The data come from the RNA Mapping Database (RMDB), library M2RFPK.
An RNA of 207 nucleotides, treated with 2A3 and DMS and read out base by base.

RNA sequence: GGGAACGACUCGAGUAGAGUCGAAAACCUCGCAUCGCAAGUUCGUGCUUGCGACUUACACGUAGGGCGAGGGGUGGGCGAAAGUUGCCAUGAGACCGUAACUUUCGUAGUCAUUGAUAAAGGGGGACAUGCCCUGACUAGUUCGCUAGUCAGGGAAUCUCCGCAUAAUGUUCGCAUUAUGCGGAGAAAAAGAAACAACAACAACAAC
Reactivity to 2A3 in 0.01 (KOAc 150mM, MgCl2 10mM, bicine 150mM(pH8.5), 24C), signal-to-noise 4, nucleotides 027 to 156: c000c000u000c010g020c000a040u010c000g010c000a000a020g010u140u210c160g220u300g080c020u000u000g000c000g000a010c000u040u150a040c100a050c130g140u180a080g000g100g020c020g010a030g040g000g030g030u120g020g040g020c020g000a000a020a000g020u000u000g000c020c010a050u100g110a080g030a190c040c020g010u010a000a000c000u020u000u000c020g000u000a020g020u010c060a090u020u110g060a060u200a180a080a050g000g010g000g000g000a010c040a060u120g030c000c000c000u000g000a000c000u000a000g030u050u060c100g040c130u000a000g000u000c000a000g000g000g010a000a000
Reactivity to DMS in 0.01 (KOAc 150mM, MgCl2 10mM, bicine 150mM(pH8.5), 24C), signal-to-noise 2, nucleotides 027 to 156: c010c000u000c020g110c130a120u000c010g010c000a040a030g010u010u000c300g030u010g000c020u000u030g020c020g000a020c070u000u000a110c120a100c110g000u000a060g030g010g010c020g020a020g030g000g000g000u010g020g020g040c020g010a070a000a020g020u000u000g020c010c030a230u000g010a300g020a130c130c150g000u000a030a020c020u000u000u000c010g010u000a100g010u000c060a160u000u030g000a130u030a040a180a150g020g000g000g060g000a060c050a080u010g000c000c000c000u000g000a000c010u000a020g000u010u000c300g070c020u000a000g000u000c000a000g030g000g000a010a020
About this RNA: The 2A3 profile rests on 2,568 reads. The reactions ran in a buffer of 150 mM KOAc, 10 mM MgCl2 and 150 mM bicine (pH 8.5), at 24 C.